[RMDB]
RNA sequence: GGGAACGACUCGAGUAGAGUCGAAAAAUCUUUAAAAGAUGGCUUUUCGCUUCGGAUCCGAUUGGUACAAGAAGGAGUGAUGCGCAGCGAGCCAGGUGGGCGCAGAACCGAGGAUGGAGAGAUGUGAGAGGGGAUAUACUUUCGAGUAUAUCCCCUCAAAAGAAACAACAACAACAAC
Reactivity to DMS in 0.01 (KOAc 150mM, MgCl2 10mM, bicine 150mM(pH8.5), 24C), signal-to-noise 2, nucleotides 027 to 126: a090u000c000u000u010u000a090a090a090a060g000a100u000g000g000c050u020u000u010u010c040g010c030u000u000c010g010g010a120u000c020c020g020a180u020u020g010g010u000a080c180a060a080g030a100a120g010g010a130g000u020g010a060u000g000c060g010c060a100g020c060g000a050g020c030c040a030g010g040u010g020g000g010c070g030c000a050g000a090a110c060c040g000a060g040g020a060u010g010g000a070g000a090g020a060u000g010u000g000a210
Chemical mapping of a 177-nucleotide RNA with DMS.
The DMS profile rests on 1,572 reads.
The reactions ran in a buffer of 150 mM KOAc, 10 mM MgCl2 and 150 mM bicine (pH 8.5), at 24 C.
For DMS the reverse transcriptase was MarathonRT.